[RMDB]
RNA sequence: GGGAACGACUCGAGUAGAGUCGAAAAGCACGUCGUUACGACGACGUGCAAGAAAACAAAAGGAGUGGCGACGCCUGGCCACAGUGAAUCAAACAGGCGAAAAGCAUGGUGGUACGCCACCAUGCAACGGUCCGUAGGAGUUCGCUCCUACGGACCGAAAAGAAACAACAACAACAAC
Reactivity to 2A3 in 0.01 (KOAc 150mM, MgCl2 10mM, bicine 150mM(pH8.5), 24C), signal-to-noise 1, nucleotides 027 to 126: g000c000a000c000g000u030c000g010u010u020a090c250g010a040c050g020a000c000g140u010g000c000a000a010g000a000a050a030a000c280a120a000a000a090g170g190a300g000u000g010g010c040g050a100c000g010c000c000u000g000g000c000c000a000c000a000g130u080g130a020a100u080c090a000a000a110c040a000g020g000c000g000a090a000a000a000g000c000a000u000g000g000u000g020g000u050a060c190g050c050c000a000c010c000a000u000g000c000a000a000